[RMDB]
RNA sequence: GGGAACGACUCGAGUAGAGUCGAAAAAUAGUUAAGGUUGCGCUUGCCUAUUUAGGCAUACUUCUCAGGAUGGCGCGUUGCAGUCCAACACGAUCCAGGGACUGUACAGAAUUUUCCUAUACCUCGAAAAACAUUCGCUUGUUCGCAAGCGAAUGAACAACUGUAUUCAGUUCGCUGAAUACAGUUGAAAAGAAACAACAACAACAAC
Reactivity to DMS in 0.01 (KOAc 150mM, MgCl2 10mM, bicine 150mM(pH8.5), 24C), signal-to-noise 2, nucleotides 027 to 156: a120u000a100g020u000u000a020a090g010g000u000u000g020c000g060c130u000u000g020c010c020u000a290u000u000u020a060g030g000c020a120u000a020c070u000u030c030u000c060a080g000g000a080u000g020g010c020g030c050g040u010u020g000c010a130g000u010c080c040a070a100c040a010c010g010a090u000c030c030a170g020g030g020a020c060u000g020u000a110c090a110g010a100a100u000u000u000u000c000c040u000a100u000a060c040c000u000c040g000a070a070a120a040a100c000a050u000u000c000g040c000u010u000g010u000u000c280g090c020a040a020g040c000g020a000a000u000g000a030a080
Reactivity to 2A3 in 0.01 (KOAc 150mM, MgCl2 10mM, bicine 150mM(pH8.5), 24C), signal-to-noise 4, nucleotides 027 to 156: a000u130a050g040u090u100a120a070g070g070u110u130g020c020g010c020u060u080g000c020c010u070a170u150u230u240a020g000g000c000a020u060a070c040u100u070c070u040c110a050g070g030a120u140g020g000c010g010c030g040u020u040g000c000a010g010u000c000c000a100a030c060a060c170g140a060u070c050c050a020g000g000g000a000c010u010g000u000a020c010a020g180a110a070u100u080u020u080c000c000u060a060u060a120c020c040u060c090g060a060a090a000a040a040c000a000u010u000c020g000c000u000u020g020u030u070c140g020c170a000a000g010c000g000a000a000u000g000a010a000

The record gives the reactivity of an RNA of 207 nucleotides to DMS and 2A3. The 2A3 profile rests on 2,040 reads. For DMS, 3,162 sequencing reads were counted. The data come from the RNA Mapping Database (RMDB), library M2RFPK. The RNA was probed in 150 mM KOAc, 10 mM MgCl2 and 150 mM bicine (pH 8.5) at 24 C.